Structure probing data (DMS and 2A3) for a 177-nucleotide construct. Reactivities are rounded to 0.1 and cut off at 0 and 3. DMS (dimethyl sulfate) methylates the pairing face of unpaired adenines and cytosines.
RNA sequence: GGGAACGACUCGAGUAGAGUCGAAAAUCCUGAUGCCGCUCCAGAAGUUGGGAUGUAUCUUGUGAUAGCUGGGUUUUAUAAGUGCAAUAUUAAAGUAAACCAUGAGUCUUUUAAGCCCAGCAUGUGGCACUGGGCAAUUAUUCGUAAUUGCCCAGUGAAAAGAAACAACAACAACAAC
Reactivity to DMS in 0.01 (KOAc 150mM, MgCl2 10mM, bicine 150mM(pH8.5), 24C), signal-to-noise 4, nucleotides 027 to 126: u000c000c010u000g020a060u020g010c020c040g000c030u000c010c040a080g010a080a180g000u010u010g030g020g010a140u000g020u010a040u010c020u020u000g030u020g000a070u060a090g000c010u010g000g000g000u010u020u010u000a010u000a020a020g030u060g020c040a050a090u010a130u020u010a060a120a170g020u030a080a070a110c160c140a090u010g000a190g000u000c010u000u000u010u000a010a040g000c000c000c000a020g010c010a020u020g010u000g020g020
Reactivity to 2A3 in 0.01 (KOAc 150mM, MgCl2 10mM, bicine 150mM(pH8.5), 24C), signal-to-noise 5, nucleotides 027 to 126: u010c000c010u030g000a000u030g000c010c030g030c050u020c030c020a050g030a290a070g190u190u110g020g010g000a030u030g020u030a040u030c010u050u180g100u120g050a100u090a060g000c010u010g000g020g060u060u080u050u060a070u020a020a020g030u080g150c030a060a110u060a060u230u260a210a040a090g070u130a050a060a010c010c010a070u090g070a010g080u020c000u010u000u010u010a020a000g000c000c000c000a000g000c000a000u040g020u050g070g030